[RMDB]
RNA sequence: GGGAACGACUCGAGUAGAGUCGAAAAUAUACAUCAGAAGUCGGCACAACUCCCGACUCGCGGUGAGCGAUGCAGCGUAGCGCGAGCUACGCAGCUGCUGUGCGGAUGGCUAGCUGGCGCUAGCCUAGAUAAUAUAGGAGUUCGCUCCUAUAUUAUCAAAAGAAACAACAACAACAAC
Reactivity to 2A3 in 0.01 (KOAc 150mM, MgCl2 10mM, bicine 150mM(pH8.5), 24C), signal-to-noise 9, nucleotides 027 to 126: u150a000u040a030c040a050u080c010a020g090a170a010g100u020c010g020g090c140a040c030a300a300c130u050c000c010c000g020a020c000u010c010g010c030g010g050u110g040a030g010c040g110a130u160g020c030a010g000c010g000u010a000g000c010g010c050g040a020g020c000u010a000c000g000c000a010g000c010u040g000c010u030g050u090g050c030g100g040a070u090g010g000c000u000a000g000c010u080g240g010c130g000c050u000a000g000c000c000u000a010
Reactivity to DMS in 0.01 (KOAc 150mM, MgCl2 10mM, bicine 150mM(pH8.5), 24C), signal-to-noise 9, nucleotides 027 to 126: u040a110u020a160c060a050u020c040a080g010a140a050g000u000c010g000g010c200a130c090a110a130c250u020c090c000c000g000a060c060u000c020g000c300g010g020u020g000a080g000c050g000a070u020g010c020a030g010c000g010u000a000g000c000g010c290g000a190g000c000u000a000c000g010c000a010g020c010u010g000c040u000g020u020g000c050g000g010a080u010g010g000c010u000a010g010c010u010g030g010c290g010c000u010a010g000c000c010u010a020

The data come from the RNA Mapping Database (RMDB), library OK1LIB. An RNA of 177 nucleotides, treated with 2A3 and DMS and read out base by base. The RNA was probed in 150 mM KOAc, 10 mM MgCl2 and 150 mM bicine (pH 8.5) at 24 C. Values cover nucleotides 27 to 126. DMS adducts were read by reverse transcription with MarathonRT.